RNA sequence: GGGAACGACUCGAGUAGAGUCGAAAAAAGAAAGUUCUUUCACAUAGUCAUACAGUAGAGAGUGGAACUCAGAUUCGUAAUAGUCAUAAGGAAGGGCUGUCAACAUCCUAAUGAGCUGAACAUAUGCAUAUCGAGCGUAUUUCGAUACGCUCGAUAUAAAAGAAACAACAACAACAAC
Reactivity to 2A3 in 0.01 (KOAc 150mM, MgCl2 10mM, bicine 150mM(pH8.5), 24C), signal-to-noise 1, nucleotides 027 to 126: a020a000g120a030a040a000g030u030u020c000u000u110u060c030a030c000a050u110a010g020u080c000a070u050a090c000a040g120u210a020g020a000g020a010g170u170g070g100a060a060c010u030c040a000g000a150u130u000c030g040u040a140a000u050a180g000u000c000a050u010a180a030g000g000a030a010g090g090g020c000u050g070u060c000a000a000c030a030u050c000c000u080a110a070u210g030a030g050c030u060g040a000a000c000a060u070a070u190g090c000
Reactivity to DMS in 0.01 (KOAc 150mM, MgCl2 10mM, bicine 150mM(pH8.5), 24C), signal-to-noise 2, nucleotides 027 to 126: a030a060g000a070a100a080g010u000u010c010u000u010u000c020a080c090a070u010a110g010u020c030a090u000a090c120a060g010u000a010g000a050g000a090g030u000g000g000a040a220c010u000c040a070g030a110u000u000c100g020u000a060a080u020a090g010u010c050a020u010a110a080g020g010a080a100g000g010g000c030u000g000u000c040a020a060c120a070u010c030c020u000a050a130u000g040a060g010c030u000g000a040a070c160a100u000a030u010g000c120